[RMDB]
RNA sequence: GGGAACGACUCGAGUAGAGUCGAAAACGCUCCCCUCUGUCCACCUUCGAGGGGGUUCACACCUCCAGGCGGCGGGCCGGCUACUCUUCUUUUCCUUUUCUCGUCUUCCUCGGUCAGCCUCCUGAGUAAAUCACAAAGUUCGCUUUGUGAAAAAGAAACAACAACAACAAC
Reactivity to DMS in 0.01 (KOAc 150mM, MgCl2 10mM, bicine 150mM(pH8.5), 24C), signal-to-noise 9, nucleotides 027 to 129: c190g020c100u020c010c010c020c000u000c000u010g020u010c020c040a090c080c040u030u040c110g020a070g000g000g000g000g000u030u030c100a110c170a080c030c010u030c030c000a030g000g000c140g000g040c020g000g000g020c000c040g010g020c070u010a100c080u030c060u030u030c040u020u030u020u030c030c030u040u040u040u020c030u000c030g010u040c070u000u000c000c000u010c030g000g000u010c030a030g000c050c000u020c010c010u000g000a080g010u020a050a070a100
Reactivity to 2A3 in 0.01 (KOAc 150mM, MgCl2 10mM, bicine 150mM(pH8.5), 24C), signal-to-noise 9, nucleotides 027 to 129: c060g030c040u130c000c010c010c000u010c010u050g150u050c050c050a110c040c050u110u130c060g010a050g000g010g000g000g000u120u120c050a070c020a040c040c010u020c030c010a000g020g000c010g010g000c000g000g000g000c000c010g030g030c020u100a090c040u060c010u130u070c010u060u080u050u100c010c000u070u080u100u050c050u020c020g050u000c020u070u020c020c010u030c000g000g000u000c000a000g000c000c000u000c000c000u000g000a010g010u070a020a090a060